[RMDB]
RNA sequence: GGGAACGACUCGAGUAGAGUCGAAAAAGAUAGGUACUUAACCUCUAAAUCGAUAAGCCGUCAGUGUCCGAUGGGGUACUGAUUGUGAUGACGAUAGUAAGUCAGCAGGUGGAAACACUUUGUGCGUCGAUCACGUUCCGUUCGCGGAACGUGAUCGAAAAGAAACAACAACAACAAC
Reactivity to 2A3 in 0.01 (KOAc 150mM, MgCl2 10mM, bicine 150mM(pH8.5), 24C), signal-to-noise 1, nucleotides 027 to 126: a000g250a030u250a060g050g060u080a080c000u040u050a050a000c000c000u000c000u000a040a270a000u050c050g010a060u000a140a030g000c000c000g000u000c000a080g030u040g000u040c000c000g000a060u300g190g000g000g000u000a000c030u050g020a000u000u000g000u000g000a020u120g000a000c000g000a000u040a040g080u080a090a050g000u060c000a030g000c000a000g020g000u050g000g020a030a050a000c000a000c000u260u250u040g020u000g000c040g000u000
The record gives the reactivity of an RNA of 177 nucleotides to 2A3. The reactions ran in a buffer of 150 mM KOAc, 10 mM MgCl2 and 150 mM bicine (pH 8.5), at 24 C.